Structure probing data (2A3 and DMS) for a 207-nucleotide construct. For DMS, 4,141 sequencing reads were counted. Source: RMDB library OK3TST, as collected in RNAgym. For 2A3 the reverse transcriptase was SuperScript II with manganese. For DMS the reverse transcriptase was MarathonRT.

[RMDB]
RNA sequence: GGGAACGACUCGAGUAGAGUCGAAAACACACCUGUAAAUGAUUAACCAAACCUACUUGAUUCUGAUAUACCUCUUCUAUAACACCAUAAUUCAAGAUACACCACGCUCCUGUUCAGGUGUAUUUUUUACUUACCUGCCUCUAAAAAGAUGUCGAGACUUGGAUGAAUAAUUCGUUAUUCAUCCAAGAAAAGAAACAACAACAACAAC
Reactivity to 2A3 in 0.01 (KOAc 150mM, MgCl2 10mM, bicine 150mM(pH8.5), 24C), signal-to-noise 5, nucleotides 027 to 156: c040a000c010a030c010c020u030g050u060a060a110a090u100g030a040u060u140a040a030c040c020a070a040a030c010c010u050a050c040u080u070g020a040u130u030c030u100g080a020u040a020u040a180c010c000u050c000u110u000c040u090a080u070a160a040c030a040c020c060a040u070a140a080u200u120c060a050a000g010a030u020a020c050a010c010c030a040c040g030c040u060c030c040u080g040u150u080c010a010g000g000u010g000u010a010u010u010u000u010u010u040a030c020u020u020a010c000c000u030g050c000c010u080c010u090a060a110a050a030a020g080a090u170g040u170c040g060a090g040a110
Reactivity to DMS in 0.01 (KOAc 150mM, MgCl2 10mM, bicine 150mM(pH8.5), 24C), signal-to-noise 2, nucleotides 027 to 156: c020a090c050a100c040c000u000g000u000a070a080a130u000g010a110u010u010a090a150c050c040a050a110a100c040c010u000a070c060u010u000g010a120u010u010c050u000g010a120u000a100u000a060c030c010u000c020u000u000c040u000a030u010a110a080c030a050c020c020a090u000a060a050u000u010c080a050a020g010a080u000a030c010a050c020c020a070c090g010c020u000c040c030u000g020u000u000c060a070g000g030u010g020u000a000u000u000u000u000u000u000a070c050u000u000a060c030c020u010g020c030c000u000c050u000a040a100a060a120a090g000a090u020g020u000c010g000a240g000a170